[RMDB]
RNA sequence: GGGAACGACUCGAGUAGAGUCGAAAAAUCUUGGCGAAGUCAGCGCGGAAGGAGCGCGCAACUCCUUACGCUCGCCUUUUUUUUUCCGCUCCCGUUCGCGAAAGCGUUCAGCGGAAAAGGGACCAAAGUAGAAUUAGGUAUUCGUACCUAAUUCUACAAAAGAAACAACAACAACAAC
Reactivity to DMS in 0.01 (KOAc 150mM, MgCl2 10mM, bicine 150mM(pH8.5), 24C), signal-to-noise 6, nucleotides 027 to 126: a050u000c080u010u010g010g020c010g020a050a090g010u010c200a110g010c190g020c010g000g000a030a030g000g000a010g020c030g010c300g010c190a080a110c010u000c010c000u000u000a090c020g020c010u000c010g010c010c000u000u000u000u000u020u000u000u010u000c000c010g010c010u000c090c050c050g000u010u000c000g030c000g000a110a070a150g020c000g010u000u000c030a060g010c000g010g000a000a010a020a050g000g010g000a120c080c120a070a060a120
Reactivity to 2A3 in 0.01 (KOAc 150mM, MgCl2 10mM, bicine 150mM(pH8.5), 24C), signal-to-noise 3, nucleotides 027 to 126: a010u040c060u040u080g000g000c020g020a060a030g200u200c080a060g140c040g000c000g120g000a030a000g010g010a010g000c080g000c040g010c100a040a200c010u000c000c000u000u020a010c010g010c030u020c030g010c000c020u090u000u000u010u010u000u000u020u020c010c000g000c010u020c030c040c010g010u000u010c010g000c010g050a120a020a020g000c010g000u010u020c030a010g000c010g010g030a000a010a000a010g040g030g020a040c030c020a100a050a060